This 207-nucleotide RNA was probed chemically with 2A3.

RNA sequence: GGGAACGACUCGAGUAGAGUCGAAAAGGACUUCUUGGGCAUCCCUGGAUCCCAGGUUAAGAACUUCUGCACUAGAGAUACAUGAGUACAGUAUACUGAUCUUUCUGGGAUAGAGGUGAGCUGAUUCAUGACCAUAUAUUCUAUCUAAUGGUUCCAGGGGUUGCGAAGUAUUCGUACUUCGCAACCCAAAAGAAACAACAACAACAAC
Reactivity to 2A3 in 0.01 (KOAc 150mM, MgCl2 10mM, bicine 150mM(pH8.5), 24C), signal-to-noise 1, nucleotides 027 to 156: g070g030a060c020u150u080c110u200u040g120g000g000c050a050u070c020c020c040u040g040g030a030u000c040c010c000a040g010g000u080u000a060a000g000a040a070c000u030u000c000u040g020c070a030c040u040a010g000a030g020a110u120a300c080a280u150g050a010g010u060a060c010a010g020u030a070u000a080c190u070g050a080u000c010u000u020u060c030u070g000g110g000a020u030a040g080a030g000g020u060g050a030g050c090u080g010a050u130u050c060a030u140g030a060c000c000a040u070a000u000a050u210u000c050u090a160u050c020u130a120a100u030g000g000u000u030c030c030a060g000

The RNA was probed in 150 mM KOAc, 10 mM MgCl2 and 150 mM bicine (pH 8.5) at 24 C.